[RMDB]
RNA sequence: GGGAACGACUCGAGUAGAGUCGAAAAAAAUCAACACUCUUGCCAUCCUACCCCUAAUCUCAAAAUCCCACCACCCCCGAGCCAUCGAAGCCGCAACCAAAUACUUCCUAGUUCAAGCAGCCGCCUCUAUUAGCCAUAUGUUCGCAUAUGGCUAAUAAAAAGAAACAACAACAACAAC
Reactivity to DMS in 0.01 (KOAc 150mM, MgCl2 10mM, bicine 150mM(pH8.5), 24C), signal-to-noise 4, nucleotides 027 to 126: a030a050a070u020c050a050a080c070a060c050u010c030u000u010g010c060c040a090u010c010c010u000a090c050c030c010c010u010a080a080u010c060u020c040a070a100a100a110u010c040c020c010a050c080c030a110c020c010c010c010c030g010a050g010c030c030a020u010c030g010a090a080g000c020c040g010c090a050a050c050c040a040a040a080u020a050c060u010u010c020c000u000a080g010u010u030c070a070a060g020c030a060g010c030c020g010c030c010u000c090
Reactivity to 2A3 in 0.01 (KOAc 150mM, MgCl2 10mM, bicine 150mM(pH8.5), 24C), signal-to-noise 3, nucleotides 027 to 126: a000a000a010u120c060a040a010c020a040c040u070c020u030u090g030c000c000a040u040c030c030u010a030c020c000c000c000u020a070a140u030c040u010c090a070a120a060a090u040c000c000c010a010c010c000a050c010c030c010c010c030g000a020g020c010c000a050u060c040g030a040a000g010c000c000g020c010a030a020c000c040a010a060a070u080a070c000u050u060c010c020u050a060g040u100u100c030a050a030g010c010a000g010c020c040g000c000c000u040c000